An RNA of 207 nucleotides, treated with 2A3 and read out base by base. Conditions: 150 mM KOAc, 10 mM MgCl2 and 150 mM bicine (pH 8.5), 24 C. For 2A3 the reverse transcriptase was SuperScript II with manganese.
[RMDB]
RNA sequence: GGGAACGACUCGAGUAGAGUCGAAAACCAAGUACAGAGUUGGAUCAUGUGGUCCAAUUGAAAGAAUGGGCUACUAGAUUCCUAAAGUGGGGUGGACCCGUGAGGCUGGUUUCACAGAGCAACGAAAAACUUCCGCUUUGUGCAGUGGAAGGAUAACGAUGUACUGAUCGUUCGCGAUCAGUACAUCAAAAGAAACAACAACAACAAC
Reactivity to 2A3 in 0.01 (KOAc 150mM, MgCl2 10mM, bicine 150mM(pH8.5), 24C), signal-to-noise 1, nucleotides 027 to 156: c000c030a000a010g090u050a020c090a070g130a030g060u090u120g100g000a010u010c060a070u040g010u010g000g000u020c000c050a010a020u080u060g070a140a110a090g110a050a120u020g000g000g000c010u000a010c000u070a040g000a120u080u150c060c000u120a110a150a010g000u070g000g020g010g040u020g020g010a060c000c040c040g040u060g000a070g000g030c020u050g000g010u070u090u050c050a090c000a030g040a010g000c060a020a040c060g090a000a070a000a010a150c000u060u000c010c000g090c050u030u100u100g110u110g000c000a000g030u000g040g000a000a000g000g000a050u070a120a020c070